[RMDB]
Chemical mapping of a 170-nucleotide RNA with DMS and 2A3.
RNA sequence: GGGAACGACUCGAGUAGAGUCGAAAAACGGGGGCGGCGGCGUCCGUUCUCUAUUCUUUUCUUUUGAAAGAGGAGACGGGUCUCCGCCCGCCCCCAGCCCCGGGAUAGCCGAAGUGCCGAGGAAGAGUAGCCACAGCGUUCGCGCUGUGGAAAAGAAACAACAACAACAAC
Reactivity to DMS in 0.01 (KOAc 150mM, MgCl2 10mM, bicine 150mM(pH8.5), 24C), signal-to-noise 3, nucleotides 027 to 129: a070c140g000g000g000g020g040c040g000g000c040g000g030c280g020u020c000c020g020u000u000c010u030c000u020a090u100u010c010u040u030u020u040c110u060u050u070u060g010a000a020a020g000a080g040g010a060g010a000c000g020g040g020u050c020u000c010c000g030c040c020c000g030c020c000c000c010c030a040g010c060c010c000c000g000g000g000a070u020a100g050c050c000g000a080a040g010u000g040c050c070g000a050g000g040a060a050g000a110g020u030a050g020
Reactivity to 2A3 in 0.01 (KOAc 150mM, MgCl2 10mM, bicine 150mM(pH8.5), 24C), signal-to-noise 4, nucleotides 027 to 129: a000c050g000g000g020g000g000c010g000g010c000g010g010c000g020u010c020c010g060u300u030c000u000c000u010a180u130u010c000u080u120u030u050c070u040u300u140u300g050a020a010a000g010a000g000g000a000g000a010c000g000g000g060u060c020u000c020c010g000c000c000c000g000c000c000c000c000c000a000g000c000c000c000c000g050g020g010a100u120a030g000c000c010g010a010a000g030u060g050c000c000g000a000g020g010a040a010g020a020g030u090a000g030
Record summary: The RNA was probed in 150 mM KOAc, 10 mM MgCl2 and 150 mM bicine (pH 8.5) at 24 C. It was measured as part of the RMDB library 15KLIB. Values are in units of 0.01, from 0 to 300, in steps of 10.